[RMDB]
This 177-nucleotide RNA was probed chemically with DMS and 2A3. The RNA was probed in 150 mM KOAc, 10 mM MgCl2 and 150 mM bicine (pH 8.5) at 24 C. DMS (dimethyl sulfate) methylates the pairing face of unpaired adenines and cytosines.
RNA sequence: GGGAACGACUCGAGUAGAGUCGAAAAAAGCAUACAAAUGAAAGUUUUGUAGUUUUAAGGAUACAUUAUUUCAUUGCACCACUGGGCGGGAGGGGGAGCUCAUGUCAACUGCGUCUAUUAAAGGCAGCAUAGACAUGUACUUCGGUACAUGUCUAUGAAAAGAAACAACAACAACAAC
Reactivity to DMS in 0.01 (KOAc 150mM, MgCl2 10mM, bicine 150mM(pH8.5), 24C), signal-to-noise 5, nucleotides 027 to 126: a070a050g010c060a070u000a090c110a080a040a020u010g000a050a040a040g020u010u000u010u010g010u000a020g000u010u010u000u020a090a160g000g010a140u000a020c030a020u000u000a040u000u000u000c020a030u000u000g000c080a170c070c040a080c110u010g000g010g020c100g010g000g000a070g010g000g000g010g000a070g010c050u000c080a040u010g000u000c090a060a100c040u000g000c040g000u010c060u000a120u020u010a040a050a080g010g010c030a050g010
Reactivity to 2A3 in 0.01 (KOAc 150mM, MgCl2 10mM, bicine 150mM(pH8.5), 24C), signal-to-noise 3, nucleotides 027 to 126: a000a000g070c050a090u150a080c040a050a080a050u070g040a100a070a160g040u040u030u040u040g000u010a040g000u000u070u160u280a130a060g140g000a030u030a050c000a010u030u050a040u050u070u030c020a020u040u060g000c030a020c010c020a020c040u050g040g030g080c100g010g000g030a070g000g000g000g010g010a010g010c010u020c040a050u080g060u030c010a020a030c010u020g010c010g060u040c030u060a170u120u190a200a030a020g070g000c000a010g000